[RMDB]
RNA sequence: GGGAACGACUCGAGUAGAGUCGAAAAGCGCUCCAGAACGUGACUUCUGAAGAGGGGCGCCGACAAGUUAGAUUGUCGAGGCGACAAAUUGGUCAGUCUGGGCAAUCUAACUGACCAAUCGCCGGCGCGUUGAGUCACGUCAACAACCCUCGAGCGAUAGUCAUAUAAUCUUCGGAUUAUAUGACUAAAAAGAAACAACAACAACAAC
Reactivity to 2A3 in 0.01 (KOAc 150mM, MgCl2 10mM, bicine 150mM(pH8.5), 24C), signal-to-noise 5, nucleotides 027 to 156: g040c020g000c010u020c030c040a050g050a100a000c000g010u000g010a010c010u100u080c090u300g120a190a080g030a060g050g030g010g000c000g000c000c000g010a010c020a020a020g000u000u000a000g000a020u000u000g010u000c060g070a010g000g010c000g010a000c010a030a300a300u180u160g170g010u030c070a080g020u020c070u080g100g010g000c000a000a010u010c000u010a000a000c000u000g000a010c010c050a050a100u100c100g010c050c000g010g000c010g000c020g050u060u090g000a000g000u020c010a000c000g000u010c020a070a120c020a030a080c020c000c000u020c040g010a010g000c010g010a030
Reactivity to DMS in 0.01 (KOAc 150mM, MgCl2 10mM, bicine 150mM(pH8.5), 24C), signal-to-noise 4, nucleotides 027 to 156: g010c030g000c010u000c020c000a090g010a090a050c020g020u000g000a060c030u000u000c110u010g020a120a120g010a120g040g000g020g020c030g020c010c010g010a020c030a090a040g000u000u000a030g010a070u000u000g010u000c000g000a070g050g030c000g000a060c000a080a100a260u000u020g050g020u000c010a070g030u010c020u000g000g020g020c050a040a040u000c010u010a010a010c000u000g010a120c130c080a100a080u020c120g020c010c000g020g000c010g030c060g010u000u000g010a100g000u000c030a040c050g030u000c040a070a060c060a150a120c010c020c010u000c060g010a090g020c010g010a300